RNA sequence: GGGAACGACUCGAGUAGAGUCGAAAAUGCUGGUUAGGGAUUGUAGAGAUGCAGUCCCCAGUGUCGCGGGCUUCUCCAAAUUAGAUUGUAUAUGGUUACGUGCGACAGAUACUGGUGAGGCGAAGAAGGGUUAAUAAUACUUCGGUAUUAUUAACCCAAAAGAAACAACAACAACAAC
Reactivity to 2A3 in 0.01 (KOAc 150mM, MgCl2 10mM, bicine 150mM(pH8.5), 24C), signal-to-noise 3, nucleotides 027 to 126: u210g000c010u010g020g100u180u140a100g000g030g000a020u020u010g020u010a050g040a040g030a100u060g040c000a000g000u010c000c000c000c010a000g000u010g010u020c010g010c010g000g050g000c010u090u000c020u000c000c000a030a050a020u130u100a080g300a300u130u220g050u110a140u050a060u090g030g030u050u040a040c060g020u070g140c000g020a020c030a030g020a030u050a020c020u020g020g030u090g050a070g000g060c020g000a010a050g080a150a100
Reactivity to DMS in 0.01 (KOAc 150mM, MgCl2 10mM, bicine 150mM(pH8.5), 24C), signal-to-noise 4, nucleotides 027 to 126: u010g010c020u010g000g000u010u010a170g000g000g000a030u000u000g020u000a000g000a210g000a150u000g000c000a010g020u000c000c020c000c080a030g000u000g010u000c060g020c030g000g010g010c100u000u000c050u010c010c030a030a090a070u010u020a090g000a130u010u030g010u010a080u010a100u020g010g000u000u000a040c050g000u010g000c040g010a050c050a080g020a100u030a040c040u030g000g010u010g000a120g000g010c040g000a060a070g020a120a120